An RNA of 170 nucleotides, treated with DMS and 2A3 and read out base by base. The RNA was probed in 150 mM KOAc, 10 mM MgCl2 and 150 mM bicine (pH 8.5) at 24 C. DMS adducts were read by reverse transcription with MarathonRT.
RNA sequence: GGGAACGACUCGAGUAGAGUCGAAAAGAUCCGUGGAGUACCCGGGAUAUCCCUUCUCCACACUCCUUCCCCCCUGCGGGGCCCCCCCAUAAGAUGGCGAGAAAUCCACUCAUGGGUCCAUCGUCCAAAAGUUGCAGGUUCGCCUGCAACAAAAGAAACAACAACAACAAC
Reactivity to DMS in 0.01 (KOAc 150mM, MgCl2 10mM, bicine 150mM(pH8.5), 24C), signal-to-noise 3, nucleotides 027 to 129: g040a050u030c150c080g000u020g010g010a000g050u010a040c000c000c000g010g000g050a180u050a130u100c050c000c020u020u030c000u010c020c050a060c030a190c090u030c020c060u020u070c000c000c000c000c000c000u050g040c120g040g030g000g040c050c070c010c050c000c010c060a050u050a060a120g020a200u100g000g050c040g000a060g020a150a170a010u020c010c020a130c000u060c180a080u050g000g000g030u030c050c030a160u080c000g000u080c000c080a090a070a040a140
Reactivity to 2A3 in 0.01 (KOAc 150mM, MgCl2 10mM, bicine 150mM(pH8.5), 24C), signal-to-noise 5, nucleotides 027 to 129: g020a060u040c100c040g000u010g000g000a020g040u100a080c060c120c100g000g000g020a110u160a140u300c020c000c000u020u020c010u000c000c000a010c000a040c040u020c010c030u030u110c010c000c000c000c000c020u080g040c140g020g000g030g000c010c000c000c000c000c000c000a030u030a000a040g060a060u150g000g000c010g000a020g010a020a040a000u000c000c000a050c070u120c120a240u140g000g000g000u000c030c020a040u030c000g000u020c020c000a000a010a000a070